Chemical mapping of a 207-nucleotide RNA with DMS and 2A3.
The data come from the RNA Mapping Database (RMDB), library ARCHII.
2A3 adducts were read by reverse transcription with SuperScript II with manganese.
DMS adducts were read by reverse transcription with MarathonRT.
RNA sequence: GGGAACGACUCGAGUAGAGUCGAAAAAAGUUGAGAGUUGGGCCAUGGGAUUUGGGCGAAGGCUCAGAUCUCCUGGUCACUAGAACGGAGGGAUCCGCAUGAGGCUGGUUUCACAGAGCAGUGAUCACUUCCUUCUCUUGACAGUGGAGGGAUUACACUAAGUAAUUACCUUCGGGUAAUUACUUAGAAAAGAAACAACAACAACAAC
Reactivity to DMS in 0.01 (KOAc 150mM, MgCl2 10mM, bicine 150mM(pH8.5), 24C), signal-to-noise 2, nucleotides 027 to 156: a090a130g020u000u000g020a050g020a080g000u000u000g030g010g020c040c010a040u000g010g020g020a040u000u000u000g010g000g000c000g000a200a110g020g000c010u000c010a000g000a030u000c010u000c010c030u000g000g020u000c010a030c080u010a100g010a100a070c070g020g010a040g040g000g020a070u000c020c040g000c060a130u010g000a080g020g030c030u010g020g000u050u000u000c100a130c050a090g020a130g010c040a100g010u000g030a040u000c000a040c020u000u010c010c010u000u000c010u000c020u010u000g010a020c050a100g000u000g020g000a080g020g000g000a160u010u000a090c050a180
Reactivity to 2A3 in 0.01 (KOAc 150mM, MgCl2 10mM, bicine 150mM(pH8.5), 24C), signal-to-noise 3, nucleotides 027 to 156: a030a000g040u030u010g020a050g000a020g020u200u040g010g000g000c020c020a020u010g000g000g010a020u000u000u030g010g000g010c080g070a160a060g280g010c010u010c000a000g010a010u000c000u000c000c020u010g000g000u020c010a000c000u030a030g030a070a020c080g000g020a010g030g010g000a040u030c070c050g060c140a180u110g040a050g110g050c020u030g050g010u030u300u300c130a130c020a040g070a030g000c050a020g030u040g110a010u020c010a050c200u010u030c000c000u030u020c020u000c000u000u050g020a020c020a070g020u060g040g070a130g020g050g020a060u090u140a070c060a010